[RMDB]
RNA sequence: GGGAACGACUCGAGUAGAGUCGAAAAGGGCUGAGCACUUUGCAGUUUAUACGAACCGGUAAGUAUAUACUGCUUGGAUACGAACCGGUAAGUAUCCUGAUGCUUCGGCAUCUUGUGCUCUGCCCAAGGGAAGGGCAACCUUCGGGUUGUUCUUCCCAAAAGAAACAACAACAACAAC
Reactivity to 2A3 in 0.01 (KOAc 150mM, MgCl2 10mM, bicine 150mM(pH8.5), 24C), signal-to-noise 9, nucleotides 027 to 126: g000g000g000c020u020g000a000g000c000a000c010u040u050u080g010c020a030g010u040u070u060a010u000a000c010g030a130a080c030c010g020g030u080a090a020g010u000a010u000a000u020a040c020u040g060c020u040u090g020g010a000u000a010c010g020a110a080c020c010g010g010u020a040a020g000u000a000u010c000c020u040g000a000u010g000c020u030u040c200g070g000c000a000u000c000u020u030g000u000g000c000u000c010u020g000c000c000c000a000a010
Reactivity to DMS in 0.01 (KOAc 150mM, MgCl2 10mM, bicine 150mM(pH8.5), 24C), signal-to-noise 5, nucleotides 027 to 126: g000g000g010c010u000g000a020g000c000a010c010u010u020u010g000c060a060g030u010u030u010a010u000a000c000g000a210a120c020c030g000g000u000a100a270g000u000a010u000a050u020a090c040u000g010c090u000u010g000g010a020u000a000c000g000a180a160c020c020g000g000u010a030a280g000u000a010u000c210c040u000g000a010u000g000c000u000u050c140g020g010c000a000u000c000u030u010g000u000g000c000u010c000u000g000c000c000c010a000a030